[RMDB]
Record summary
The data come from the RNA Mapping Database (RMDB), library RFM100. An RNA of 177 nucleotides, treated with 2A3 and read out base by base.
RNA sequence: GGGAACGACUCGAGUAGAGUCGAAAAUCACUCUUGUUUCACUUCAGAUCGUAUAAAUCUUUCGCCUUUUACUAAAGAUUUCCGUGGAGUGGAACAAUUAAGAGUUUUACUCAAUUUUUUGAUGCCCCCCUUUUGUGCCUUUCGAGGCACAAAAGGGAAAAGAAACAACAACAACAAC
Reactivity to 2A3 in 0.01 (KOAc 150mM, MgCl2 10mM, bicine 150mM(pH8.5), 24C), signal-to-noise 3, nucleotides 027 to 126: u130c010a020c010u020c030u000u010g010u000u010u020c000a000c000u050u000c020a080g030a300u100c050g020u100a120u140a190a030a000u000c000u000u010u000c030g040c050c090u070u300u230u300a130c060u050a000a020a010g020a000u030u010u020c040c090g020u060g000g000a000g000u000g010g000a000a000c000a020a010u090u080a080a010g010a000g030u050u020u030u090a050c050u040c050a120a170u020u090u080u100u040u110g020a020u100g000c020c000c000
For 2A3, 907 sequencing reads were counted.